[RMDB]
RNA sequence: GGGAACGACUCGAGUAGAGUCGAAAAGAGCAACUUAGGAUUUUAGGCUUCCCGGUGCGUCUCGAACCGCGCCGGGCCAAACCCACAGGGGCUGGCGGUCCUGUGCGGUCAAAAUCUUUCCGCUGGAAUACCUAUCCCAGUUUCGACUGGGAUAGAACUAGAAUCCAUGGUUCGCCAUGGAUUCUAGAAAAGAAACAACAACAACAAC
Reactivity to 2A3 in 0.01 (KOAc 150mM, MgCl2 10mM, bicine 150mM(pH8.5), 24C), signal-to-noise 2, nucleotides 027 to 156: g050a010g000c030a040a090c040u060u160a040g010g110a100u100u080u000u080a060g020g030c010u080u000c000c000c000g000g010u000g000c020g000u010c130u130c250g110a130a080c060c000g010c010g000c000c000g020g000g000c030c000a050a020a000c020c000c000a000c000a000g010g000g000g000c010u000g000g010c010g030g000u050c000c010u000g010u010g020c230g010g040u060c030a020a030a020a040u030c010u100u150u020c020c000g000c000u010g000g070a140a050u130a210c000c010u000a000u010c000c000c000a000g000u040u030u170c210g100a030c000u000g010g000g000a000u000a000g000a000a000